[RMDB]
RNA sequence: GGGAACGACUCGAGUAGAGUCGAAAAUUCCUUGGGUAAAGCCCAAGAGCAGCGAGGCACCGACGAUACCGCCGACGAUGGAGUGCGUGGUGGACACUGGCCAGCCCAUCUUGGUGGCCACGAGGAGUCGUAUACGGCUAUUCGUAGCCGUAUACGAAAAAGAAACAACAACAACAAC
Reactivity to DMS in 0.01 (KOAc 150mM, MgCl2 10mM, bicine 150mM(pH8.5), 24C), signal-to-noise 3, nucleotides 027 to 126: u010u020c040c010u000u010g010g000g020u010a080a110a190g020c030c010c020a020a080g000a110g000c080a080g010c050g010a080g000g010c020a110c030c030g000a030c070g010a160u010a080c060c020g010c020c000g000a070c160g000a080u010g000g000a110g020u010g010c040g060u000g010g000u000g000g000a120c110a060c080u010g020g000c010c020a130g010c020c020c060a060u010c060u000u000g010g030u000g020g000c030c040a020c030g000a140g010g010a090g010
Reactivity to 2A3 in 0.01 (KOAc 150mM, MgCl2 10mM, bicine 150mM(pH8.5), 24C), signal-to-noise 2, nucleotides 027 to 126: u070u050c040c000u020u010g050g000g010u140a180a120a130g120c000c010c000a010a010g050a030g060c020a010g020c020g030a100g030g050c050a030c060c040g080a090c050g030a030u040a080c000c000g050c000c010g010a050c110g030a050u170g020g070a100g090u140g040c100g060u030g040g030u030g040g040a060c030a010c190u090g030g010c040c000a050g010c000c000c010a030u060c030u060u070g000g050u000g030g000c050c010a050c040g030a020g040g030a010g020